Background: Chemical mapping of a 177-nucleotide RNA with 2A3 and DMS. The RNA was probed in 150 mM KOAc, 10 mM MgCl2 and 150 mM bicine (pH 8.5) at 24 C. The 2A3 profile rests on 30,275 reads. For DMS, 35,042 sequencing reads were counted. For 2A3 the reverse transcriptase was SuperScript II with manganese.

RNA sequence: GGGAACGACUCGAGUAGAGUCGAAAAUCGGACCGUAGUAACGGUGUUAGACUUACCCGGACGCGUGGAGUUCCUCGCCCCGCCUUUCGUCGUUUACUCCGGUAAAAUCGGCGUCUUGUACCUCGCCCUUACUUAAAGUGUUCGCACUUUAAGUAAGAAAAGAAACAACAACAACAAC
Reactivity to 2A3 in 0.01 (KOAc 150mM, MgCl2 10mM, bicine 150mM(pH8.5), 24C), signal-to-noise 9, nucleotides 027 to 126: u110c030g070g070a000c010c010g010u030a020g030u020a050a010c000g000g000u020g040u030u030a030g020a070c060u150u170a110c040c010c000g010g020a050c050g030c010g010u050g020g070a290g160u250u240c000c000u000c010g000c000c000c000c000g050c020c000u010u040u030c010g020u000c000g020u040u070u060a020c010u000c040c020g020g020u070a060a040a010a080u140c040g010g010c010g030u010c050u090u090g040u060a060c010c020u010c010g000c010c010
Reactivity to DMS in 0.01 (KOAc 150mM, MgCl2 10mM, bicine 150mM(pH8.5), 24C), signal-to-noise 9, nucleotides 027 to 126: u010c080g010g010a040c010c010g020u000a060g010u010a030a030c010g010g010u000g010u000u000a050g010a090c110u010u010a140c160c160c050g010g010a050c200g010c040g020u000g010g010a270g000u010u010c010c010u000c030g010c020c030c010c030g010c080c020u000u000u000c020g020u000c010g010u010u000u000a030c020u000c070c030g000g010u000a040a030a070a090u010c110g010g010c020g020u000c070u000u000g010u010a120c100c050u000c030g010c050c050
For DMS the reverse transcriptase was MarathonRT.